[RMDB]
RNA sequence: GGGAACGACUCGAGUAGAGUCGAAAAAGGUAAAGUCUGCGGUGCUCUGCAGCGUCGUAGAACCGGAUCAAGGCACGAGAGGUUGCGUGAUAUUCAGUUUCAAGGUCUGGAAAUUCAUGAUAAAGCUGAGGGAAUCGUCGAGCAAACUUCGUAAUGAUAAUCUUGCUACGUUCGCGUAGCAAGAUUAAAAAGAAACAACAACAACAAC
Reactivity to 2A3 in 0.01 (KOAc 150mM, MgCl2 10mM, bicine 150mM(pH8.5), 24C), signal-to-noise 2, nucleotides 027 to 156: a000g080g020u060a120a040a000g040u000c000u000g000c020g020g020u000g000c000u020c090u200g110c100a030g000c010g030u030c000g000u000a000g010a070a010c000c000g000g000a010u060c040a010a060g030g000c050a010c070g040a020g000a020g120g000u080u060g020c020g030u010g000a020u020a050u080u080c030a010g030u030u070u160c110a100a080g050g020u000c030u050g020g060a050a060a030u130u020c060a030u080g050a080u100a050a090a000g020c050u050g020a030g020g040g000a010a060u050c040g030u000c010g040a010g010c050a020a060a090c040u060u070c040g100u130a020a160u060g040a060
Reactivity to DMS in 0.01 (KOAc 150mM, MgCl2 10mM, bicine 150mM(pH8.5), 24C), signal-to-noise 1, nucleotides 027 to 156: a060g000g000u000a060a110a090g030u000c010u010g040c020g010g010u000g020c010u000c080u020g020c190a140g080c010g050u000c010g020u000a060g000a040a190c060c010g040g010a130u000c040a060a120g000g000c020a120c060g000a070g000a080g020g000u000u020g000c030g030u000g020a050u000a120u000u010c060a070g010u000u000u000c040a080a140g060g000u000c000u000g000g000a030a040a150u000u000c050a070u000g020a110u000a040a090a140g020c040u000g020a100g000g050g000a080a040u010c030g020u020c000g010a040g020c040a060a080a080c000u000u000c040g060u020a090a010u000g000a140

This 207-nucleotide RNA was probed chemically with 2A3 and DMS. Values cover nucleotides 27 to 156. For DMS the reverse transcriptase was MarathonRT. The 2A3 profile rests on 1,189 reads. For DMS, 2,612 sequencing reads were counted. The reactions ran in a buffer of 150 mM KOAc, 10 mM MgCl2 and 150 mM bicine (pH 8.5), at 24 C.